About this RNA: An RNA of 177 nucleotides, treated with 2A3 and DMS and read out base by base. The DMS profile rests on 6,569 reads. 2A3 adducts were read by reverse transcription with SuperScript II with manganese.
RNA sequence: GGGAACGACUCGAGUAGAGUCGAAAAGAUGCGUCGUGGAAGUCCCGUGACGCAACAUCCACGGUCCGCGGAGGUACCUCGGCCGGCGGAGAGUUGCGUUGGGAGAUUCAGCGGGCCAAGCCGUGGGGCCCCUAGCUACGUUCGCGUAGUUAGGGGCAAAAGAAACAACAACAACAAC
Reactivity to 2A3 in 0.01 (KOAc 150mM, MgCl2 10mM, bicine 150mM(pH8.5), 24C), signal-to-noise 3, nucleotides 027 to 126: g100a010u090g020c050g030u060c020g040u060g070g020a060a030g100u040c020c000c000g030u040g010a010c000g000c000a000a000c010a000u000c000c010a010c010g000g000u060c030c010g000c040g010g010a060g110g150u140a170c000c000u000c000g040g000c000c000g000g000c100g010g030a100g030a070g060u010u000g010c040g000u010u020g020g030g000a060g000a010u040u010c020a030g040c020g000g000g000c020c000a020a010g020c010c000g040u030g000g000g050
Reactivity to DMS in 0.01 (KOAc 150mM, MgCl2 10mM, bicine 150mM(pH8.5), 24C), signal-to-noise 2, nucleotides 027 to 126: g030a070u000g010c020g000u040c000g010u020g010g020a070a060g020u010c000c000c010g020u020g000a030c000g010c010a000a000c010a220u010c000c000a050c000g000g020u020c000c000g020c180g000g000a290g000g030u050a140c000c010u020c020g000g010c000c010g000g000c230g000g010a050g000a170g030u000u010g000c010g020u010u000g000g000g000a030g000a080u010u000c040a160g000c010g000g000g000c030c050a120a150g000c030c030g010u010g010g000g010